This 207-nucleotide RNA was probed chemically with DMS and 2A3.
High DMS reactivity at an A or C suggests that its Watson-Crick edge is free.
Values cover nucleotides 27 to 156.
The 2A3 profile rests on 11,689 reads.
RNA sequence: GGGAACGACUCGAGUAGAGUCGAAAAGUGUGUCAUUGAAGAUCCAACAGCAAGUGGCACUAACUUUCAGGCAGUUGGAUCUCCUGGAAGUGACUCAGUGCUGCUAGUCUAAGUACUGAGAGAUCGGUACAACUAAGAGUAGCAGUUGUACUGAGUACGUUUCGACUCUGUUCGCAGAGUCGAGACGAAAAGAAACAACAACAACAAC
Reactivity to DMS in 0.01 (KOAc 150mM, MgCl2 10mM, bicine 150mM(pH8.5), 24C), signal-to-noise 4, nucleotides 027 to 156: g010u010g010u000g020u000c040a100u010u010g020a120a090g000a120u000c030c050a070a080c070a220g020c050a110a100g020u030g000g020c020a060c030u010a050a060c020u000u000u000c020a010g010g020c080a050g010u000u000g020g020a160u000c010u010c000c000u000g000g010a040a050g000u010g020a120c010u000c010a010g000u000g000c000u000g020c020u000a050g000u000c030u000a090a300g030u000a020c010u000g000a050g010a250g010a180u000c020g030g010u000a010c010a050a110c100u010a100a110g010a100g030u000a020g030c040a040g000u000u010g010u000a030c000u020g000a030g010u000a090
Reactivity to 2A3 in 0.01 (KOAc 150mM, MgCl2 10mM, bicine 150mM(pH8.5), 24C), signal-to-noise 8, nucleotides 027 to 156: g130u080g000u000g010u020c010a030u030u110g090a090a050g050a140u080c070c080a080a070c020a090g120c030a090a040g040u020g000g000c010a000c030u050a060a020c000u020u020u020c010a020g020g030c040a020g040u080u150g140g060a180u060c000u000c010c000u010g020g000a010a020g010u020g030a010c000u000c010a000g010u010g010c000u010g000c000u010a040g080u000c000u020a100a050g010u000a000c010u010g000a010g010a010g010a070u030c000g000g010u010a010c020a100a050c090u160a140a030g030a030g070u010a000g000c010a010g000u070u100g070u050a010c000u010g000a000g000u010a030